[RMDB]
An RNA of 207 nucleotides, treated with 2A3 and read out base by base. The data come from the RNA Mapping Database (RMDB), library OK3TST. For 2A3 the reverse transcriptase was SuperScript II with manganese. Values cover nucleotides 27 to 156.
RNA sequence: GGGAACGACUCGAGUAGAGUCGAAAAUCUACAAACUGCUGGAUGGCGCGCCUCCUGCCGCGCCUGACAUCGGUGGCGGUGACGGCCCUGCCGUAGCGGUUUCUGGGUCGCAGGCCCGGACGGUCGCCGACCUCCCUGUUCCGCAGCCGUAUGGCGCCUGUACUUGAGGAUUCGUCCUCAAGUACAGAAAAGAAACAACAACAACAAC
Reactivity to 2A3 in 0.01 (KOAc 150mM, MgCl2 10mM, bicine 150mM(pH8.5), 24C), signal-to-noise 2, nucleotides 027 to 156: u000c010u060a050c040a080a130a050c020u020g000c000u000g080g000a080u080g010g000c010g000c020g010c030c070u230c020c060u130g040c120c000g010c000g000c000c010u030g000a000c000a010u100c030g020g000u040g040g000c040g010g070u040g020a020c010g060g010c010c030c050u060g000c010c010g100u110a050g010c050g010g000u080u080u010c070u110g070g020g010u020c040g040c160a110g010g000c020c030c050g010g020a040c060g040g020u030c010g000c040c020g120a230c050c000u040c010c000c020u040g100u110u030c030c010g010c050a050g010c010c000g210u290a140u180g020g000c000g020c000